[RMDB]
RNA sequence: GGGAACGACUCGAGUAGAGUCGAAAAGGAGCUCGGCAAGCUCUUAAUCGUAGGUAGAGCUUGCGUUCGCUCUACCUUACCACCGGAGCGAACUGUAGGGUCGGUGGUUUCGUGACUCUACAGUAAGGGCACGAAACGAUAUUGCUCUUACCGAGCACGUGUCCACCUUGUUCGCAAGGUGGAUGCGAAAAGAAACAACAACAACAAC
Reactivity to 2A3 in 0.01 (KOAc 150mM, MgCl2 10mM, bicine 150mM(pH8.5), 24C), signal-to-noise 3, nucleotides 027 to 156: g170g010a080g000c010u000c020g000g000c050a030a050g000c010u000c020u020u060a090a060u070c050g040u020a010g000g020u020a010g010a000g010c030u100u120g090c080g120u120u050c030g010c000u000c000u000a000c000c010u030u070a020c000c020a030c010c030g000g000a000g010c020g030a070a050c050u060g030u050a040g000g010g000u000c010g000g060u170g080g000u000u010u010c010g000u010g080a140c000u000c000u030a030c020a020g010u070a020a040g020g020g020c010a010c070g040a060a060a000c050g030a030u040a080u210u100g000c010u000c000u010u020a020c010c010g010a000g000c020a010
The record gives the reactivity of an RNA of 207 nucleotides to 2A3. For 2A3 the reverse transcriptase was SuperScript II with manganese. Source: RMDB library OK3TST, as collected in RNAgym.